[RMDB]
RNA sequence: GGGAACGACUCGAGUAGAGUCGAAAAGAGAAUCUUGGGAAAAAGCAAAGGUAAAAGGGCGCUUUCGAGAUGGAAACCCGGAAAGUUCCUUUUCCUUCUUUCGUGUUGUGUCGCGAGGACAGCGUUCAAACUCAGACGACGUCGAAGAAUUUGGAGACGUGUAGAUUGGAUUCGUCCAAUCUACACGAAAAGAAACAACAACAACAAC
Reactivity to 2A3 in 0.01 (KOAc 150mM, MgCl2 10mM, bicine 150mM(pH8.5), 24C), signal-to-noise 1, nucleotides 027 to 156: g050a000g050a120a050u040c060u160u220g030g010g040a100a020a000a000a000g040c060a080a020a000g020g030u140a080a020a030a010g000g010g010c070g000c030u000u010u000c160g070a250g000a020u090g020g060a210a160a100c050c090c070g030g020a050a000a000g000u040u120c010c010u000u000u000u110c010c000u000u000c010u010u080u020c070g000u070g000u110u100g080u030g020u040c020g010c030g070a020g050g010a010c030a070g050c020g030u100u050c020a080a000a030c010u020c070a030g050a080c090g000a020c000g000u050c010g010a050a030g040a050a110u070u040u250g050g000a090g020a080

This 207-nucleotide RNA was probed chemically with 2A3. The reactions ran in a buffer of 150 mM KOAc, 10 mM MgCl2 and 150 mM bicine (pH 8.5), at 24 C. 2A3 adducts were read by reverse transcription with SuperScript II with manganese. High 2A3 reactivity points to a flexible backbone, as in loops and unpaired stretches.